[RMDB]
RNA sequence: GGGAACGACUCGAGUAGAGUCGAAAAGAAAGAAAGAAAGAACUUCCCUAUGAAGAAUGAUAUUUGUAUGUUAAAUAAAAGUAGUGGGCUGAUCUCCAUUGAUGACUGACCAAUUCUGAGGGAUGAACUUGACCAUGAUCUUCGGAUCAUGGUCAAGAAAAGAAACAACAACAACAAC
Reactivity to 2A3 in 0.01 (KOAc 150mM, MgCl2 10mM, bicine 150mM(pH8.5), 24C), signal-to-noise 2, nucleotides 027 to 126: g110a000a000a000g160a000a070a000g200a000a090a010g050a020a000c090u000u000c000c010c000u050a100u100g020a000a050g000a060a070u100g080a060u070a150u140u300u030g050u060a130u040g050u000u040a040a040a160u230a170a300a190a000g060u020a000g000u000g000g090g000c000u000g080a190u010c000u040c080c020a110u070u020g000a000u240g020a010c010u000g000a010c000c010a060a030u000u000c020u050g000a080g120g000g000a040u070g010a020a000
Reactivity to DMS in 0.01 (KOAc 150mM, MgCl2 10mM, bicine 150mM(pH8.5), 24C), signal-to-noise 1, nucleotides 027 to 126: g020a080a130a130g080a040a070a090g000a080a050a040g000a170a070c070u010u000c000c040c000u040a120u020g030a080a030g000a010a010u000g050a090u010a050u030u040u010g000u000a010u020g000u010u020a010a040a130u030a000a020a060a070g000u020a010g020u010g040g000g000c010u000g020a050u000c040u010c130c100a060u020u010g020a030u010g000a030c000u000g000a130c060c080a000a040u000u010c030u010g000a020g000g000g020a030u010g010a030a160

The record gives the reactivity of an RNA of 177 nucleotides to 2A3 and DMS.
It was measured as part of the RMDB library RFM100.
The reactions ran in a buffer of 150 mM KOAc, 10 mM MgCl2 and 150 mM bicine (pH 8.5), at 24 C.
For DMS, 1,782 sequencing reads were counted.
2A3 adducts were read by reverse transcription with SuperScript II with manganese.